[RMDB]
RNA sequence: GGGAACGACUCGAGUAGAGUCGAAAAGAACAGGACCAAAUGGGUCCCCAGCCAGCCGUGUUCAAUGUCUAGACCAGUCCUUCAUUGCUGAUUUUAGGCUGAGAGGAACGUGCGUUUGCCCCUCCUCGAUGAAUGUCAUGUUCGCAUGACAUUCAUCAAAAGAAACAACAACAACAAC
Reactivity to 2A3 in 0.01 (KOAc 150mM, MgCl2 10mM, bicine 150mM(pH8.5), 24C), signal-to-noise 3, nucleotides 027 to 126: g060a050a020c030a060g010g010a010c020c010a060a140a300u240g130g000g000u000c000c000c020c000a010g050c010c010a010g000c020c000g030u040g060u020u040c030a050a030u080g020u000c030u040a020g010a060c020c030a000g050u090c010c040u110u130c080a140u180u220g000c010u020g040a160u010u030u080u170a040g010g030c020u030g050a060g000a010g150g040a060a040c010g040u100g020c030g020u070u090u110g050c020c000c000c000u030c000c000u020c030
Reactivity to DMS in 0.01 (KOAc 150mM, MgCl2 10mM, bicine 150mM(pH8.5), 24C), signal-to-noise 5, nucleotides 027 to 126: g010a080a070c100a100g010g000a050c020c030a040a140a110u010g010g010g020u000c000c020c040c080a090g020c060c050a090g010c030c020g010u000g010u000u020c030a050a090u000g020u000c020u000a050g000a050c070c020a050g000u000c130c090u000u000c190a090u000u000g010c020u000g000a080u000u000u000u000a060g000g000c010u010g000a270g000a050g000g000a070a040c090g010u000g030c040g030u000u010u010g000c040c020c000c060u000c020c010u000c180
Chemical mapping of a 177-nucleotide RNA with 2A3 and DMS. For 2A3, 3,970 sequencing reads were counted. DMS (dimethyl sulfate) methylates the pairing face of unpaired adenines and cytosines. The data come from the RNA Mapping Database (RMDB), library OK2TRN. 2A3 adducts were read by reverse transcription with SuperScript II with manganese.